[RMDB]
RNA sequence: GGGAACGACUCGAGUAGAGUCGAAAAGCGCAGCUCCGAAAAUGGAUGGUGCCCAAGUCAGUGUGUCUCCCUUACAGUCUGCCAUCGAUGUGGCAGCCAAGGCAGAGCAUCGUUGUGUAGAAAGGGCAUGGACAACAGCUGAUCGUGUUGGGAUUGAUCUACGAUCAAAGUUCGCUUUGAUCGUAGAAAAAGAAACAACAACAACAAC
Reactivity to DMS in 0.01 (KOAc 150mM, MgCl2 10mM, bicine 150mM(pH8.5), 24C), signal-to-noise 2, nucleotides 027 to 156: g050c060g010c060a090g020c040u010c000c060g000a030a030a070a130u000g020g000a020u000g000g010u010g010c010c000c080a000a120g040u000c040a050g020u020g020u010g030u000c010u010c020c000c010u000u020a140c090a140g060u000c010u000g010c000c010a070u000c060g000a090u010g010u000g000g000c030a120g000c010c080a050a090g060g000c040a070g010a300g000c010a040u000c010g000u010u000g000u040g040u000a050g010a110a080a100g000g000g030c300a060u030g030g000a050c030a030a050c030a110g010c000u000g000a030u000c080g000u010g030u020u010g000g000g010a200u000u000g000a210
Reactivity to 2A3 in 0.01 (KOAc 150mM, MgCl2 10mM, bicine 150mM(pH8.5), 24C), signal-to-noise 4, nucleotides 027 to 156: g040c070g000c040a060g020c010u050c010c020g160a200a140a050a180u260g010g010a030u030g040g080u070g030c040c010c010a050a010g050u010c000a010g010u010g010u010g110u070c090u230c010c000c000u030u080a120c060a110g120u020c010u000g010c000c000a000u020c010g050a020u050g030u050g080g080c060a030g010c020c020a070a050g100g000c030a020g000a000g100c000a010u000c000g000u000u020g050u020g010u110a000g020a020a030a010g010g000g000c040a090u120g070g000a000c010a020a010c010a070g020c000u010g000a030u060c100g030u040g010u070u010g030g000g020a070u000u040g010a010